An RNA of 177 nucleotides, treated with 2A3 and DMS and read out base by base. It was measured as part of the RMDB library M2PK50. For 2A3 the reverse transcriptase was SuperScript II with manganese. Reactivities are given for positions 27 through 126.
RNA sequence: GGGAACGACUCGAGUAGAGUCGAAAAGCACUCCUUUUCGAAGGAGUGCCCAGGCGCGCGGCGUUUGUCCUGUCGCGUGUGCGCCGCGCGCGAUAUACGCGCAUCUGUGCAUAUUCGUAUGCACAAAGUUCUAGGAAUGUUUCGACAUUCCUAGAACAAAAGAAACAACAACAACAAC
Reactivity to 2A3 in 0.01 (KOAc 150mM, MgCl2 10mM, bicine 150mM(pH8.5), 24C), signal-to-noise 4, nucleotides 027 to 126: g010c000a000c010u020c000c010u020u040u050u120c190g110a030a000g020g000a000g000u000g000c010c000c000a050g050g050c010g000c010g000c010g000g040c020g010u060u160u300g130u080c020c040u120g120u250c040g000c010g010u020g010u030g000c010g000c000c010g000c000g000c000g010c000g020a000u010a000u000a020c000g020c000g000c020a050u020c050u090g000u000g000c010a010u020a030u040u080c180g090u020a000u020g000c010a000c000a020a050a000
Reactivity to DMS in 0.01 (KOAc 150mM, MgCl2 10mM, bicine 150mM(pH8.5), 24C), signal-to-noise 3, nucleotides 027 to 126: g020c000a010c000u000c000c000u000u010u000u020c150g010a010a010g010g000a010g020u000g000c000c010c070a170g000g010c000g010c000g020c000g010g010c010g030u000u010u000g010u000c050c060u000g020u000c030g020c000g010u000g020u010g000c030g010c000c000g020c010g000c010g000c010g000a020u000a060u000a040c010g010c000g020c180a150u010c170u000g000u000g000c000a000u000a010u000u010c180g010u000a010u000g000c010a010c000a030a050a090